The data come from the RNA Mapping Database (RMDB), library OK1LIB. Chemical mapping of a 177-nucleotide RNA with DMS and 2A3. The DMS profile rests on 2,130 reads. Reactivities are given for positions 27 through 126. The reactions ran in a buffer of 150 mM KOAc, 10 mM MgCl2 and 150 mM bicine (pH 8.5), at 24 C. For 2A3, 8,186 sequencing reads were counted.
[RMDB]
RNA sequence: GGGAACGACUCGAGUAGAGUCGAAAAGGAAGACAACUCCGGGUCUUCCAGACGCACGAGUGCAGCGUCAAAGUACUCGAAGGAAGGCGAAAGACACCACGUCUUCCAACCGGAGAAGGUGUCAGAAGGGAUGCAUGUACUUCGGUACGUGCAUCCCAAAAGAAACAACAACAACAAC
Reactivity to DMS in 0.01 (KOAc 150mM, MgCl2 10mM, bicine 150mM(pH8.5), 24C), signal-to-noise 1, nucleotides 027 to 126: g140g040a000a000g030a000c030a050a160c000u000c000c000g000g000g000u000c000u000u000c020c000a010g000a020c020g000c020a140c140g000a170g050u000g000c090a160g070c000g000u000c000a040a100a040g000u040a110c070u000c010g000a230a170g030g000a000a000g000g000c000g010a070a110a110g040a010c070a050c030c080a220c000g000u000c000u010u000c090c020a000a000c000c000g000g020a000g020a090a110g010g060u000g000u000c010a050g030a110a080
Reactivity to 2A3 in 0.01 (KOAc 150mM, MgCl2 10mM, bicine 150mM(pH8.5), 24C), signal-to-noise 4, nucleotides 027 to 126: g010g000a000a000g000a000c000a060a020c030u000c000c000g000g000g000u000c000u000u000c000c000a000g010a000c000g030c010a050c100g160a070g130u230g070c120a030g000c050g020u030c010a010a000a000g020u020a060c000u010c040g020a080a020g000g000a000a000g000g000c000g020a050a030a030g020a000c000a010c000c000a010c000g000u010c000u000u000c000c000a000a010c010c000g000g000a010g010a010a040g000g000u000g000u010c020a020g080a090a140